[RMDB]
RNA sequence: GGGAACGACUCGAGUAGAGUCGAAAAUUGCUCCUGGUCCCACUGCCAAACCUCUGGAGUCUGCCACAUCCCUGCAUAGACAGGGCCACUGACAGGCAGUGGCAGCCAGUUCAGUGGCACUCAGCCACAAUCGGACUGGUUUCGACCAGUCCGAUUGAAAAGAAACAACAACAACAAC
Reactivity to DMS in 0.01 (KOAc 150mM, MgCl2 10mM, bicine 150mM(pH8.5), 24C), signal-to-noise 3, nucleotides 027 to 126: u000u000g010c030u000c040c010u010g000g010u010c290c000c030a070c070u000g010c050c030a070a170a170c130c030u000c050u020g000g000a180g020u000c090u000g000c060c040a060c100a160u000c010c020c010u000g020c040a110u010a150g010a110c040a040g010g010g000c030c040a050c040u000g000a060c130a200g000g010c030a030g040u000g010g040c160a110g000c020c010a050g000u010u010c070a080g010u000g000g020c000a090c130u020c150a110g020c030c050a100
Reactivity to 2A3 in 0.01 (KOAc 150mM, MgCl2 10mM, bicine 150mM(pH8.5), 24C), signal-to-noise 2, nucleotides 027 to 126: u070u130g060c010u000c020c010u010g040g000u050c000c020c010a030c030u030g000c020c010a040a110a170c030c040u160c080u140g110g000a080g080u010c020u030g080c070c040a090c020a140u200c010c000c000u040g000c120a270u130a160g130a160c000a000g000g020g030c000c000a020c030u030g020a010c020a040g020g020c010a010g010u000g000g020c000a010g000c030c000a020g010u110u100c010a070g000u050g010g030c000a030c050u150c060a000g000c000c060a010